[RMDB]
RNA sequence: GGGAACGACUCGAGUAGAGUCGAAAACAAAGGAGGACGGGAAAAGGAAGAAAAAGAAGGUUCAGGGAUUCAAGAGAGAGCAUCACACACAUAUACAGGCGACGCAAGGACUCUCUGGCCAUCUCUCCGCCAUGAUGGGAUUCGUCCCAUCAUGGCGAAAAGAAACAACAACAACAAC
Reactivity to DMS in 0.01 (KOAc 150mM, MgCl2 10mM, bicine 150mM(pH8.5), 24C), signal-to-noise 1, nucleotides 027 to 126: c080a060a090a060g030g070a000g050g010a090c120g020g000g000a060a080a010a000g050g000a040a110g010a000a090a020a060a070g000a020a060g000g000u030u000c150a060g000g000g000a040u030u000c090a090a060g000a060g010a000g010a100g000c010a060u000c030a030c060a060c300a080c230a040u070a080u040a070c190a120g000g050c070g000a080c030g000c060a000a070g000g010a110c080u000c030u000c000u000g000g020c000c070a030u000c000u000c080u000c040
Reactivity to 2A3 in 0.01 (KOAc 150mM, MgCl2 10mM, bicine 150mM(pH8.5), 24C), signal-to-noise 2, nucleotides 027 to 126: c030a030a050a000g030g060a020g000g000a090c090g000g030g110a020a130a070a000g060g020a020a020g090a070a060a020a030a000g070a030a010g080g000u100u150c020a030g000g000g000a020u090u070c060a070a000g010a010g010a000g010a000g070c020a030u140c020a030c010a020c000a000c010a030u090a010u180a240c080a030g080g010c000g080a050c050g000c080a020a090g060g010a110c000u020c000u000c010u010g030g040c000c000a070u020c040u000c000u020c010